RNA sequence: GGGAACGACUCGAGUAGAGUCGAAAAAUUUUGGAUUUACUGGACGCUGCAAGCGGUGUGGGUGUGGGUGACGCUCCUGCCUGUCAUCAUCUUGAAUGGCAGCGAUCACAAUCCAGGCUUGUGGCCACUAUUGAGAGUCAUUCGUGACUCUCAAUAGAAAAGAAACAACAACAACAAC
Reactivity to 2A3 in 0.01 (KOAc 150mM, MgCl2 10mM, bicine 150mM(pH8.5), 24C), signal-to-noise 6, nucleotides 027 to 126: a000u210u190u100u120g090g020a060u080u060u110a180c070u070g070g040a040c060g020c020u010g010c030a030a030g010c050g040g080u140g030u040g090g030g000u080g020u080g080g100g040u080g060a030c050g020c050u040c000c010u040g030c000c010u050g090u060c010a030u020c010a040u040c070u160u200g100a160a050u050g050g000c010a000g010c010g020a060u030c010a000c030a030a010u010c000c010a000g030g000c010u030u060g040u070g070g000c000c020a020
Reactivity to DMS in 0.01 (KOAc 150mM, MgCl2 10mM, bicine 150mM(pH8.5), 24C), signal-to-noise 7, nucleotides 027 to 126: a110u010u000u010u000g020g010a110u000u000u010a100c180u000g010g010a110c150g010c010u000g000c020a050a040g020c120g020g020u010g020u010g010g010g010u000g020u000g010g020g010u000g010a090c130g010c100u000c040c030u000g000c060c010u000g010u000c020a040u000c120a110u010c190u000u010g010a080a040u000g000g010c010a020g000c070g000a070u000c020a020c070a090a040u010c010c010a050g010g000c030u000u000g010u000g000g010c020c130a190